[RMDB]
RNA sequence: GGGAACGACUCGAGUAGAGUCGAAAAAGCGUGGGCUGCUGGAUGUCGAGCCCGAAGACGUUGGAUCGCCGCACCCCAUCGUUAGAGUUGAUGAUGGAGUUGAUGAUAGAGUUGUUCAUUUAUAGUCCCGCGAGAUCAUUAAAUACUGCCGUACGCGCAGGAAUUCUACUUUCGAGUAGAAUUCCUGAAAAGAAACAACAACAACAAC
Reactivity to 2A3 in 0.01 (KOAc 150mM, MgCl2 10mM, bicine 150mM(pH8.5), 24C), signal-to-noise 2, nucleotides 027 to 156: a000g060c010g000u080g010g010g040c000u000g020c020u060g120g020a070u070g110u120c080g040a080g000c010c000c010g010a090a050g040a000c040g010u030u110g020g080a060u020c050g010c030c030g040c010a020c000c020c020c000a000u010c000g020u000u060a050g060a140g250u090u190g040a040u010g000a020u000g000g000a080g020u030u080g080a070u040g030a040u060a130g070a000g030u080u070g000u050u050c000a010u020u180u120a150u090a050g070u080c010c000c010g000c010g000a030g010a010u130c030a030u120u110a060a080a030u120a100c050u090g010c000c000g040u080a090c050g010c000g010
Reactivity to DMS in 0.01 (KOAc 150mM, MgCl2 10mM, bicine 150mM(pH8.5), 24C), signal-to-noise 1, nucleotides 027 to 156: a060g020c060g030u000g010g010g000c010u000g000c020u000g020g020a110u010g000u000c040g010a160g010c040c030c040g020a070a120g030a060c060g030u000u010g010g000a110u000c060g050c030c000g030c060a110c000c000c000c000a030u000c000g030u000u000a120g020a140g010u020u020g030a050u010g020a050u000g020g010a070g030u020u000g030a030u000g010a160u000a050g000a160g020u000u000g010u000u000c030a160u000u010u020a100u000a180g010u080c010c000c080g000c080g050a120g020a050u000c040a090u000u000a050a000a160u000a060c050u000g020c000c010g010u000a050c040g020c080g000